[RMDB]
RNA sequence: GGGAACGACUCGAGUAGAGUCGAAAACAGCCCGUCUUCGGACGGGCUGAAACCGGAAGCCGAAGCCGAACGGCAAGCCGAACCGGAAGGGCAACGGCAAAAAAACCAUAAUGUUCGCAUUAUGGAAGACUCCUAUAUGGUUCGCCAUAUAGGAGUCAAAAGAAACAACAACAACAAC
Reactivity to DMS in 0.01 (KOAc 150mM, MgCl2 10mM, bicine 150mM(pH8.5), 24C), signal-to-noise 1, nucleotides 027 to 126: c000a030g000c000c000c000g010u000c000u000u020c250g060g000a040c030g000g000g000c010u000g000a020a030a060c010c000g010g000a070a100g000c000c010g000a060a300g020c010c000g010a090a170c040g000g000c040a080a060g010c040c070g000a120a130c010c000g000g050a120a140g010g030g000c010a070a240c020g020g030c000a000a020a040a040a100a030a110c020c000a000u000a000a000u000g000u020u030c240g020c000a000u000u000a000u000g000g000a090a030
This 177-nucleotide RNA was probed chemically with DMS. For DMS the reverse transcriptase was MarathonRT. The data come from the RNA Mapping Database (RMDB), library M2PK50.